[RMDB]
RNA sequence: GGGAACGACUCGAGUAGAGUCGAAAACCUUGUUGGCUUCGGCCAACAAGGAAAAAACCGUAGGCAUCGUUGUAUGCCUUGGACCCAAUUUCGAAAGAGAUUGGCUAGGCACAACAUGCCUAAACGGAAAAAAUGAUAACCUUUCGAGGUUAUCAAAUGUAAAGCUUAACUUCGGUUAAGCUUUACAAAAAGAAACAACAACAACAAC
Reactivity to 2A3 in 0.01 (KOAc 150mM, MgCl2 10mM, bicine 150mM(pH8.5), 24C), signal-to-noise 2, nucleotides 027 to 156: c000c000u000u010g000u000u000g010g000c000u020u040c250g100g000c000c010a000a010c000a000a010g010g000a090a060a000a040a000a000c020c000g010u010a010g010g010c000a020u020c120g020u000u010g030u130a150u190g020c020c010u000u050g050g040a060c020c020c010a000a000u010u000u000c040g060a180a060a080g020a020g000a000u010u010g000g020c010u020a010g000g000c010a010c000a030a010c000a000u010g000c010c000u010a010a030a010c000g000g060a040a020a040a070a000a120u150g020a000u070a000a000c000c000u040u050u200c300g100a000g000g000u010u000a000u030c000a000a040a050
Reactivity to DMS in 0.01 (KOAc 150mM, MgCl2 10mM, bicine 150mM(pH8.5), 24C), signal-to-noise 2, nucleotides 027 to 156: c010c000u000u000g030u010u000g020g000c020u010u010c300g050g000c020c000a000a060c000a010a010g020g000a010a020a050a070a040a090c010c000g030u010a050g000g000c010a010u000c150g020u000u000g070u000a110u000g020c000c000u000u000g010g010a100c300c000c000a000a010u000u000u000c000g000a210a140a300g000a010g010a020u000u010g020g020c010u000a010g040g060c000a070c000a010a080c010a300u000g000c010c000u000a000a020a070c030g010g020a000a020a110a140a100a160u000g000a030u000a030a010c000c010u000u010u000c230g000a050g030g000u010u010a000u000c000a000a030a060
Conditions: 150 mM KOAc, 10 mM MgCl2 and 150 mM bicine (pH 8.5), 24 C. Chemical mapping of a 207-nucleotide RNA with 2A3 and DMS. For 2A3 the reverse transcriptase was SuperScript II with manganese. The DMS profile rests on 3,981 reads. The 2A3 profile rests on 2,038 reads. 2A3 is a SHAPE reagent: it acylates the 2'-hydroxyl of flexible nucleotides of all four kinds.